[RMDB]
Conditions: 150 mM KOAc, 10 mM MgCl2 and 150 mM bicine (pH 8.5), 24 C. An RNA of 177 nucleotides, treated with DMS and 2A3 and read out base by base. For DMS the reverse transcriptase was MarathonRT. For 2A3, 10,858 sequencing reads were counted. For 2A3 the reverse transcriptase was SuperScript II with manganese.
RNA sequence: GGGAACGACUCGAGUAGAGUCGAAAAGAUAUGGACGACUGCAGAGAGAGCAACAGCUCGGAAACGAGACAUGCUUGGUUGUUCGUCCUAAGUCAAAGCUAUUGUAAGCUUCGGCUUACAAUAGCAACAUUUCUUUACGGUUCGCCGUAAAGAAAUGAAAAGAAACAACAACAACAAC
Reactivity to DMS in 0.01 (KOAc 150mM, MgCl2 10mM, bicine 150mM(pH8.5), 24C), signal-to-noise 5, nucleotides 027 to 126: g010a070u000a260u000g010g000a020c010g010a010c090u000g030c040a210g020a210g010a140g010a010g000c000a030a090c240a150g000c000u000c010g000g010a060a060a140c010g000a000g010a050c130a140u000g000c020u000u000g000g030u000u000g000u000u000c000g020u000c000c000u000a040a090g000u000c030a070a100a090g000c000u000a010u000u000g010u000a010a010g000c000u000u020c190g040g000c000u010u000a000c010a010a010u000a000g010c000a040a070
Reactivity to 2A3 in 0.01 (KOAc 150mM, MgCl2 10mM, bicine 150mM(pH8.5), 24C), signal-to-noise 4, nucleotides 027 to 126: g020a020u040a030u130g010g000a000c010g000a000c020u050g000c090a040g170a050g060a020g030a000g300c010a010a130c040a120g080c000u000c000g020g000a010a060a020c010g000a000g020a050c030a090u120g010c000u080u190g070g040u050u020g070u130u020c010g000u000c000c000u020a090a000g020u020c070a210a040a000g000c000u000a000u010u000g000u010a000a010g000c000u040u140c300g100g000c010u020u010a000c000a000a000u000a000g000c000a000a000